[RMDB]
RNA sequence: GGGAACGACUCGAGUAGAGUCGAAAAGCACGUGGACAGUGGAUUCUGAUGGUCAUAUUACAGUGUGCUAGCGAGGGAACUCCGUCCGGGGGUGAACCGCGAAACAGUACCGGACUCACCAAGUAGCAUCCUGUCUUUCGGAGACUGCUUGGUUAAAGGUACUUAAUUUGUUCGCAAAUUAAGUACCAAAAGAAACAACAACAACAAC
Reactivity to DMS in 0.01 (KOAc 150mM, MgCl2 10mM, bicine 150mM(pH8.5), 24C), signal-to-noise 3, nucleotides 027 to 156: g030c000a030c010g000u000g010g010a070c060a070g010u000g010g010a070u000u000c030u000g020a170u010g020g010u010c030a150u000a070u010u000a130c040a080g030u000g020u010g010c010u000a210g010c060g010a140g000g010g010a160a060c030u000c010c000g000u000c060c000g030g010g040g020g010u010g010a210a170c010c000g010c020g000a100a050a110c070a120g000u000a080c020c010g010g000a050c050u010c070a080c010c010a010a030g030u000a030g050c040a110u000c000c000u000g020u010c190u000u010u010c160g010g000a090g000a060c010u010g000c000u010u000g030g010u000u000a010a070a140
Reactivity to 2A3 in 0.01 (KOAc 150mM, MgCl2 10mM, bicine 150mM(pH8.5), 24C), signal-to-noise 9, nucleotides 027 to 156: g020c000a010c060g040u070g040g060a030c030a090g070u060g070g070a110u190u060c070u150g100a160u150g030g020u040c060a010u060a070u160u170a080c050a050g080u040g000u000g100c010u000a010g000c000g010a270g020g000g010a000a010c010u010c050c030g020u010c010c000g000g000g000g000g000u010g010a010a010c000c010g010c010g020a030a040a010c070a030g030u030a040c000c000g000g000a010c010u010c060a010c010c000a000a000g000u000a000g010c020a080u010c010c020u140g100u200c090u140u230u190c070g010g000a030g020a050c000u000g000c000u000u000g000g010u000u040a000a010a000
The record gives the reactivity of an RNA of 207 nucleotides to DMS and 2A3.
It was measured as part of the RMDB library RSTRND.
Values cover nucleotides 27 to 156.